An RNA of 177 nucleotides, treated with DMS and 2A3 and read out base by base. Values cover nucleotides 27 to 126. For 2A3 the reverse transcriptase was SuperScript II with manganese. Conditions: 150 mM KOAc, 10 mM MgCl2 and 150 mM bicine (pH 8.5), 24 C. For DMS, 26,218 sequencing reads were counted. High 2A3 reactivity points to a flexible backbone, as in loops and unpaired stretches.
[RMDB]
RNA sequence: GGGAACGACUCGAGUAGAGUCGAAAAACGUCCAGCUCCCUCGGGACCACGCUGCUCUGGGCGGAAGAGUCUUCUGACACUUCUAGCCUAUUCACGUUCGCGUCCUUGAGGCCUGGCGUAACGCGGCCAACAGAAAUAAGUUCGCUUAUUUCUGUUGAAAAGAAACAACAACAACAAC
Reactivity to DMS in 0.01 (KOAc 150mM, MgCl2 10mM, bicine 150mM(pH8.5), 24C), signal-to-noise 9, nucleotides 027 to 126: a030c020g000u010c010c010a020g010c040u010c150c000c000u000c020g000g000g000a020c010c030a050c020g010c280u000g010c030u000c010u000g000g000g020c000g000g000a010a010g000a070g010u000c000u010u010c300u010g010a020c010a080c000u000u000c000u000a110g010c010c000u000a010u020u010c020a050c020g010u000u010c160g030c160g010u000c000c000u000u010g020a010g010g000c180c000u000g000g010c020g000u000a050a080c090g010c090g010g000c160
Reactivity to 2A3 in 0.01 (KOAc 150mM, MgCl2 10mM, bicine 150mM(pH8.5), 24C), signal-to-noise 9, nucleotides 027 to 126: a000c010g060u070c010c000a010g000c050u280c040c000c000u000c010g000g000g010a000c000c000a010c020g100c180u020g000c010u000c010u010g010g000g000c010g010g000a000a000g010a010g000u000c010u260u110c180u300g020a010c010a010c030u010u000c010u050a160g000c000c000u010a010u060u080c000a000c010g020u140u140c110g020c080g030u000c010c000u030u280g000a000g000g000c000c000u000g000g010c000g000u010a040a030c080g020c050g140g010c040